[RMDB]
RNA sequence: GGGAACGACUCGAGUAGAGUCGAAAAGCCCAUUUCUUCGGAAAUGGGCAAAGGCUCAACUCAUGGAGCGCACGACGGAUCACCAUCGAUUCGACAUGAGAAAAACGGGGCGGUUCGCCGCCCCGAAGUAUUUUUCAUAGUUCGCUAUGAAAAAUACAAAAGAAACAACAACAACAAC
Reactivity to DMS in 0.01 (KOAc 150mM, MgCl2 10mM, bicine 150mM(pH8.5), 24C), signal-to-noise 2, nucleotides 027 to 126: g000c010c000c010a010u000u000u000c000u010u000c160g050g010a000a050a020u000g000g000g040c010a000a040a060g010g010c000u000c010a090a100c010u010c010a040u000g010g010a040g020c010g030c180a090c080g020a070c020g020g000a040u000c080a120c120c180a080u000c110g010a090u000u000c010g000a160c020a020u000g000a040g000a170a060a060a120a090c010g010g020g040g030c000g000g000u000u010c170g020c000c020g010c000c000c010c000g000a020a010
Reactivity to 2A3 in 0.01 (KOAc 150mM, MgCl2 10mM, bicine 150mM(pH8.5), 24C), signal-to-noise 2, nucleotides 027 to 126: g000c000c010c000a010u000u000u000c020u030u040c130g110g010a010a000a000u020g000g000g020c000a010a040a000g000g000c000u000c020a040a060c020u010c000a020u030g030g000a000g040c030g000c060a050c190g180a000c010g000g010a010u020c000a010c200c060a190u200c140g020a020u050u000c000g040a010c020a030u050g010a040g050a060a050a000a010a020c020g000g040g050g010c040g000g050u040u050c140g050c040c020g000c000c000c000c000g000a010a000

The record gives the reactivity of an RNA of 177 nucleotides to DMS and 2A3.